[RMDB]
RNA sequence: GGGAACGACUCGAGUAGAGUCGAAAAUACAAUAUAACUCUACCUGAGGGGAUGGUUUGGAAAGUCACCCAGGUAUGCUCUGGAACAUCCAUCAGCUAAAUAGUCUUGCUCUUGACUCUUGCAGACAAAAGUUGUGAUCUUUCGAGAUCACAACUUUAAAAGAAACAACAACAACAAC
Reactivity to DMS in 0.01 (KOAc 150mM, MgCl2 10mM, bicine 150mM(pH8.5), 24C), signal-to-noise 1, nucleotides 027 to 126: u010a140c160a130a140u020a130u000a170a050c040u000c010u000a040c000c010u040g000a090g000g000g000g000a050u020g000g000u030u000u000g020g010a110a080a130g000u000c060a040c090c000c010a030g020g000u010a040u000g020c130u010c020u000g000g010a070a170c060a040u000c020c010a000u000c010a040g070c070u010a040a080a170u010a070g000u000c020u000u000g010c020u020c060u000u000g000a070c040u000c300u010u010g000c010a030g010a050c090a060
Reactivity to 2A3 in 0.01 (KOAc 150mM, MgCl2 10mM, bicine 150mM(pH8.5), 24C), signal-to-noise 1, nucleotides 027 to 126: u130a000c010a010a170u160a040u060a300a050c030u040c000u080a060c000c000u000g010a040g080g040g000g010a000u010g010g040u150u220u060g130g070a140a130a090g030u050c000a050c030c000c020a000g030g030u070a060u100g060c020u000c010u030g040g030a130a070c000a040u000c000c000a030u070c020a010g080c030u120a130a060a150u010a040g020u000c000u020u110g030c000u020c000u030u030g080a030c000u030c020u090u020g000c000a000g020a170c000a000